Background:
Source: RMDB library M2PK50, as collected in RNAgym. The record gives the reactivity of an RNA of 177 nucleotides to DMS and 2A3. DMS adducts were read by reverse transcription with MarathonRT. The reactions ran in a buffer of 150 mM KOAc, 10 mM MgCl2 and 150 mM bicine (pH 8.5), at 24 C. For DMS, 975 sequencing reads were counted. 2A3 adducts were read by reverse transcription with SuperScript II with manganese.
RNA sequence: GGGAACGACUCGAGUAGAGUCGAAAACUCUAGGGGUUCGCCCCUAGAGAAAUAAAAGCUCAACAAACACCAAAAACAAGACCAUGGUGAAAGAAUAAAUAAAAAGCAUGGCGUUCGCGCCAUGCAACUACCAUAUCAAGUUCGCUUGAUAUGGUAGAAAAGAAACAACAACAACAAC
Reactivity to DMS in 0.01 (KOAc 150mM, MgCl2 10mM, bicine 150mM(pH8.5), 24C), signal-to-noise 1, nucleotides 027 to 126: c000u000c020u020a020g000g010g020g020u000u010c300g020c010c000c000c000u000a000g010a020g020a000a100a040u000a080a090a170a080g010c020u000c040a100a110c180a100a130a140c020a010c020c030a000a050a010a100a150c070a050a030g010a100c090c090a080u010g030g030u000g000a120a100a120g010a120a050u000a060a050a020u000a010a060a080a100a150g010c000a000u000g000g010c000g030u010u010c230g020c000g000c000c010a020u000g000c000a000a050
Reactivity to 2A3 in 0.01 (KOAc 150mM, MgCl2 10mM, bicine 150mM(pH8.5), 24C), signal-to-noise 3, nucleotides 027 to 126: c000u000c010u000a010g000g040g000g000u020u030c160g100c020c020c000c010u000a010g000a000g000a000a000a000u010a010a050a020a000g060c020u010c110a010a060c040a050a220a010c010a030c020c010a050a040a080a100a090c060a110a090g100a140c070c040a100u050g000g010u030g060a150a120a040g030a080a110u240a150a090a020u170a010a100a040a000a000g000c000a000u010g000g010c010g030u060u060c230g000c000g000c090c000a000u000g000c000a000a000